Record summary: The data come from the RNA Mapping Database (RMDB), library OK1LIB. Structure probing data (2A3 and DMS) for a 177-nucleotide construct. For DMS, 1,323 sequencing reads were counted. Conditions: 150 mM KOAc, 10 mM MgCl2 and 150 mM bicine (pH 8.5), 24 C. 2A3 adducts were read by reverse transcription with SuperScript II with manganese.

RNA sequence: GGGAACGACUCGAGUAGAGUCGAAAAGUGGCACAUUCAGUGGCGGUAGGUUAGCCCGCCGGAACCCAGGGCUGGCGCUGAGCUCGAUCAGCAGGCUGGUUAGCUGCUCCAUGCCGCGGCGCUGGACUGUGGUGAGUGAGUUCGCUCACUCACCACAAAAAGAAACAACAACAACAAC
Reactivity to 2A3 in 0.01 (KOAc 150mM, MgCl2 10mM, bicine 150mM(pH8.5), 24C), signal-to-noise 2, nucleotides 027 to 126: g050u070g020g000c050a030c040a100u160u130c120a030g050u080g150g000c030g030g040u130a110g100g140u050u130a000g040c020c000c000g000c000c000g060g030a030a020c000c020c000a010g040g150g000c030u040g010g000c010g000c020u060g020a030g000c040u070c070g060a070u040c050a040g000c020a040g140g000c020u000g050g070u020u070a030g000c030u030g020c010u010c000c010a090u200g090c030c040g110c020g010g010c030g030c000u010g000g060a070c080
Reactivity to DMS in 0.01 (KOAc 150mM, MgCl2 10mM, bicine 150mM(pH8.5), 24C), signal-to-noise 1, nucleotides 027 to 126: g000u000g010g000c000a020c110a060u060u080c080a060g020u000g000g000c000g010g020u000a060g010g000u000u000a040g060c140c030c020g040c000c000g050g000a040a150c090c000c000a000g000g000g110c020u010g000g000c050g020c070u000g040a180g010c160u020c190g040a050u000c030a030g070c130a100g020g020c010u050g000g000u020u010a060g000c070u000g000c080u000c000c170a060u000g040c020c020g090c000g020g000c000g000c030u000g000g020a110c070